An RNA of 177 nucleotides, treated with 2A3 and DMS and read out base by base.
Source: RMDB library OK1LIB, as collected in RNAgym.
Reactivities are rounded to 0.1 and cut off at 0 and 3.

[RMDB]
RNA sequence: GGGAACGACUCGAGUAGAGUCGAAAAACUAGUAUGUACAGGGGUGAGUUGACCUGUCAUCUAGACUGCUGACCAUCAACUCACUGGUCAGCUGGAUGAUGUCCACAGAGUACGACAUCAGUACUCAGAGUAAGGUUGGCUUCGGCUAACUUUACUCAAAAGAAACAACAACAACAAC
Reactivity to 2A3 in 0.01 (KOAc 150mM, MgCl2 10mM, bicine 150mM(pH8.5), 24C), signal-to-noise 9, nucleotides 027 to 126: a000c000u010a010g060u150a050u030g070u100a010c000a010g020g020g040g050u150g090a130g060u070u090g130a100c000c000u000g000u000c000a000u000c000u000a010g050a100c030u030g000c000u000g000a000c000c000a010u090c030a030a070c050u030c070a030c040u010g000g000u000c000a000g000c010u010g020g010a060u100g010a030u080g050u030c020c010a060c070a090g030a010g030u040a020c050g080a020c090a170u120c030a040g010u020a020c010u010c040a010
Reactivity to DMS in 0.01 (KOAc 150mM, MgCl2 10mM, bicine 150mM(pH8.5), 24C), signal-to-noise 9, nucleotides 027 to 126: a260c000u000a010g010u050a010u000g000u060a010c000a010g000g000g000g010u010g000a030g020u000u010g000a080c000c000u000g000u000c000a010u000c000u000a010g000a160c040u000g000c000u000g000a010c000c010a010u020c030a020a020c030u000c030a030c080u000g010g000u010c000a000g000c000u000g000g010a110u010g000a080u020g010u000c010c040a120c260a130g000a040g010u000a030c050g010a140c150a080u050c090a100g010u000a010c010u000c010a160

The RNA was probed in 150 mM KOAc, 10 mM MgCl2 and 150 mM bicine (pH 8.5) at 24 C.